[RMDB]
RNA sequence: GGGAACGACUCGAGUAGAGUCGAAAAAUCUGGUCGCACCGCUGCCCCACAAGGGCACCGACAGGCGCAUCACAGAUAUCACCGAAUGACUUCGGAGUGAUCUGGCGCAGUUUCCCGGCUGAAUUCCGAUACCCUUACACUUCGGUGUAAGGGUAUCAAAAGAAACAACAACAACAAC
Reactivity to 2A3 in 0.01 (KOAc 150mM, MgCl2 10mM, bicine 150mM(pH8.5), 24C), signal-to-noise 1, nucleotides 027 to 126: a010u030c020u030g050g050u120c030g000c010a090c070c030g020c080u030g010c000c000c000c000a080c020a060a060g000g000g030c010a000c000c000g030a040c060a110g060g050c070g000c020a050u150c050a020c000a030g010a010u010a020u030c000a000c040c010g020a020a050u200g160a150c080u020u010c020g000g000a020g030u060g000a010u000c000u060g030g020c010g040c040a000g000u010u020u050c020c000c000g000g000c050u120g070a110a100u170u070c050c040
Reactivity to DMS in 0.01 (KOAc 150mM, MgCl2 10mM, bicine 150mM(pH8.5), 24C), signal-to-noise 2, nucleotides 027 to 126: a000u010c070u000g000g040u000c070g000c120a040c080c030g010c170u000g000c000c000c000c030a080c300a130a300g000g000g000c000a010c030c010g000a130c110a110g000g000c030g010c070a180u010c070a300c000a010g000a020u000a070u000c000a040c000c010g000a020a050u000g000a150c300u000u000c000g000g010a050g000u010g000a010u000c010u000g000g000c140g010c000a050g040u000u000u010c020c000c010g000g000c080u000g000a080a140u010u000c080c030
This 177-nucleotide RNA was probed chemically with 2A3 and DMS. DMS (dimethyl sulfate) methylates the pairing face of unpaired adenines and cytosines. For DMS, 1,207 sequencing reads were counted. For 2A3 the reverse transcriptase was SuperScript II with manganese. For DMS the reverse transcriptase was MarathonRT. For 2A3, 1,257 sequencing reads were counted.